[RMDB]
RNA sequence: GGGAACGACUCGAGUAGAGUCGAAAACAAUAAGAACAAUGUUACUAAUGUGUUGGAAUUUAAUUAAAGCCAAUGUUUAUCAAUAUGGAAUUGUAAGUUUUGACACUAAAGCGCCAACUUUCCGUGAAUUCUAUCUUUGGUUCGCCAAAGAUAGAAUAAAAGAAACAACAACAACAAC
Reactivity to DMS in 0.01 (KOAc 150mM, MgCl2 10mM, bicine 150mM(pH8.5), 24C), signal-to-noise 5, nucleotides 027 to 126: c070a070a090u020a120a100g010a120a100c110a090a110u010g010u000u000a090c070u010a110a130u020g000u000g010u000u000g010g000a030a020u010u000u000a020a060u010u010a050a050a180g010c010c010a010a060u000g000u000u010u010a070u020c070a030a060u010a120u000g000g000a040a050u000u000g010u000a000a030g000u000u000u000u000g000a010c000a010c020u010a070a110a060g010c080g020c060c050a040a030c120u000u000u000c030c040g000u000g000a100
Reactivity to 2A3 in 0.01 (KOAc 150mM, MgCl2 10mM, bicine 150mM(pH8.5), 24C), signal-to-noise 4, nucleotides 027 to 126: c000a000a140u190a150a080g080a060a010c030a080a120u130g020u130u080a070c060u070a090a110u130g000u000g000u010u010g010g010a010a010u010u010u050a070a070u090u160a100a010a000g000c010c000a030a020u030g060u020u190u090a250u180c040a040a030u080a120u130g010g030a020a060u070u070g010u030a000a010g000u000u000u020u020g000a000c000a000c000u070a110a130a020g040c050g010c040c010a020a080c060u010u040u020c040c010g030u020g090a030